[RMDB]
RNA sequence: GGGAACGACUCGAGUAGAGUCGAAAAGAAAGAAACAUCACCCUAUGGAAAAGAAAGGCAGCCACAUAAGAAACCUGAGGAAACAGGAAGCCACAACGUGCGCCAUGUGGUUACCAAAGGGAGAAAACGUAGCGUAUCGUUUCGACGAUACGCUACGAAAAGAAACAACAACAACAAC
Reactivity to DMS in 0.01 (KOAc 150mM, MgCl2 10mM, bicine 150mM(pH8.5), 24C), signal-to-noise 1, nucleotides 027 to 126: g010a020a150a020g000a090a130a050c100a070u010c150a080c030c000c000u000a070u010g020g000a010a080a020a130g000a020a110a070g050g000c060a110g020c020c030a050c060a020u000a030a040g000a110a290a120c000c000u000g000a120g040g040a050a080a150c060a050g060g000a120a060g080c040c060a060c000a110a110c180g010u000g040c080g010c000c220a070u010g040u000g000g000u000u000a070c000c000a000a050a000g000g030g000a080g000a020a030a120a220
Reactivity to 2A3 in 0.01 (KOAc 150mM, MgCl2 10mM, bicine 150mM(pH8.5), 24C), signal-to-noise 2, nucleotides 027 to 126: g110a030a090a010g110a080a110a020c030a040u060c000a060c040c000c000u030a050u040g110g010a040a090a000a010g170a090a060a050g100g010c030a000g000c030c010a010c000a000u060a050a010g130a070a120a070c030c050u050g060a130g050g180a130a040a020c000a000g030g000a080a020g000c000c030a000c080a160a300c220g050u240g020c030g000c010c000a000u080g000u020g000g000u000u010a000c010c010a050a050a020g000g010g020a010g030a020a210a030a000